[RMDB]
RNA sequence: GGGAACGACUCGAGUAGAGUCGAAAAGGCUGUUCCCCUGUGCAGGGCUGAAGGCUGCUCUGCUCCCCACCUGGUGGGUGGACAAGAUGCUGUGAGUUGGGAGUGGGCCCAGUAGGCCAGCUCCAGGUGGGAAGCAGGGUUGUGAUAGCCAUGACUAGUCAUACCUACCCUUCGGGGUAGGUAUGACAAAAGAAACAACAACAACAAC
Reactivity to 2A3 in 0.01 (KOAc 150mM, MgCl2 10mM, bicine 150mM(pH8.5), 24C), signal-to-noise 1, nucleotides 027 to 156: g030g000c070u040g030u040u060c000c020c000c030u140g050u160g100c080a020g000g030g050c010u060g030a100a050g100g040c000u030g020c010u010c000u010g020c000u000c000c000c000c020a000c000c000u030g000g110u200g020g000g120u000g030g030a000c060a080a030g110a120u110g030c030u060g050u100g050a070g150u030u180g080g000g000a020g040u070g030g020g010c010c000c000a020g000u040a020g030g120c050c010a040g010c000u080c000c000a000g000g020u010g000g000g070a000a000g000c000a010g000g010g020u000u040g030u000g020a120u200a000g000c000c020a010u000g000a060c130u100a090